[RMDB]
RNA sequence: GGGAACGACUCGAGUAGAGUCGAAAAUGUGUAUUUCCUAAGAACAAGGACACUUUCUUAUGUACCCACACUAUAUGGAUCAAAAUCAGAACACUUAGCAUGGAUACAGUACCAUACAGUAAUCCACUCCGUGCUUUACCUUCGGGUAAAGCACGGAAAAAGAAACAACAACAACAAC
Reactivity to 2A3 in 0.01 (KOAc 150mM, MgCl2 10mM, bicine 150mM(pH8.5), 24C), signal-to-noise 1, nucleotides 027 to 126: u030g120u000g000u000a170u000u060u040c000c010u130a000a040g200a090a000c080a000a000g180g000a000c000a000c000u080u150u000c010u170u300a090u180g050u090a120c000c000c000a000c000a000c080u010a010u120a070u260g000g030a000u120c020a000a000a000a190u060c050a000g010a300a000c000a000c000u000u120a010g000c000a000u000g000g000a000u000a270c010a000g010u010a000c000c000a100u170a130c000a100g070u130a010a090u000c000c000a100c050